[RMDB]
RNA sequence: GGGAACGACUCGAGUAGAGUCGAAAAUUGCACGAUCGACCAAGGCUCCGGUGACGGGUCGAAGUGAAGAUGCACCGCCCACAACGCGCACAACUCGACGAUGGUCCGGGCCACCAUCGGUGCCGGCCAUGGCAUAUCGUUUCGACGAUAUGCCAUGAAAAGAAACAACAACAACAAC
Reactivity to 2A3 in 0.01 (KOAc 150mM, MgCl2 10mM, bicine 150mM(pH8.5), 24C), signal-to-noise 9, nucleotides 027 to 126: u110u090g020c010a010c030g120a190u020c000g010a010c010c010a080a080g050g000c050u070c070c040g090g050u140g120a110c100g030g000g000u000c010g000a040a010g070u110g120a100a040g060a090u070g010c020a040c010c060g070c000c030c000a040c030a030a080c030g080c000g030c010a010c020a060a260c080u080c120g150a080c020g010a050u020g000g000u020c030c020g020g000g000c040c000a020c010c000a030u030c030g040g000u020g030c010c000g010g010c020
Reactivity to DMS in 0.01 (KOAc 150mM, MgCl2 10mM, bicine 150mM(pH8.5), 24C), signal-to-noise 5, nucleotides 027 to 126: u040u030g010c010a010c040g010a130u010c000g010a040c030c010a100a150g000g000c020u030c020c030g010g030u040g010a140c110g000g000g000u000c010g010a030a100g010u010g010a110a060g000a150u020g020c050a060c150c070g000c000c000c010a090c160a080a110c100g010c110g010c010a040c020a080a050c110u030c120g010a280c020g000a040u010g000g000u010c070c010g000g000g000c020c020a080c030c030a010u010c050g000g010u000g020c000c010g010g010c130
This 177-nucleotide RNA was probed chemically with 2A3 and DMS. For DMS the reverse transcriptase was MarathonRT. The reactions ran in a buffer of 150 mM KOAc, 10 mM MgCl2 and 150 mM bicine (pH 8.5), at 24 C. The DMS profile rests on 15,578 reads. 2A3 adducts were read by reverse transcription with SuperScript II with manganese.